[RMDB]
RNA sequence: GGGAACGACUCGAGUAGAGUCGAAAAGCUUUUCCUCAAGGCCGAGGGUGAGGCCAAGGCAGGGAAGCACGAAAGAAGCGCCCCCUCUCCUAGGGGUCAGUUUUCUGCCAAGACUGCCGCGUCAGCAGAACAAAAGCAAGUCUCAUGUUAGCACAAAACCAUAUCAUCCGUUCGCGGAUGAUAUGGUAAAAGAAACAACAACAACAAC
Reactivity to 2A3 in 0.01 (KOAc 150mM, MgCl2 10mM, bicine 150mM(pH8.5), 24C), signal-to-noise 1, nucleotides 027 to 156: g000c020u070u040u120u120c000c000u010c010a010a130g030g000c000c000g090a040g070g110g020u080g070a060g070g000c000c070a010a010g020g000c050a000g010g060g060a070a000g020c080a030c180g120a180a050a030g070a150a000g030c010g000c110c000c020c010c020u090c040u060c000c000u030a000g040g000g000g000u000c000a000g000u000u000u000u140c010u010g000c010c000a050a030g040a060c020u080g050c040c030g060c060g100u050c070a070g000c010a110g080a090a030c050a040a120a010a000g160c010a000a120g010u000c030u100c040a020u160g000u240u140a050g060c040a030c080a100a230a000
Source information:
Chemical mapping of a 207-nucleotide RNA with 2A3. Values cover nucleotides 27 to 156. The RNA was probed in 150 mM KOAc, 10 mM MgCl2 and 150 mM bicine (pH 8.5) at 24 C. The 2A3 profile rests on 568 reads. For 2A3 the reverse transcriptase was SuperScript II with manganese.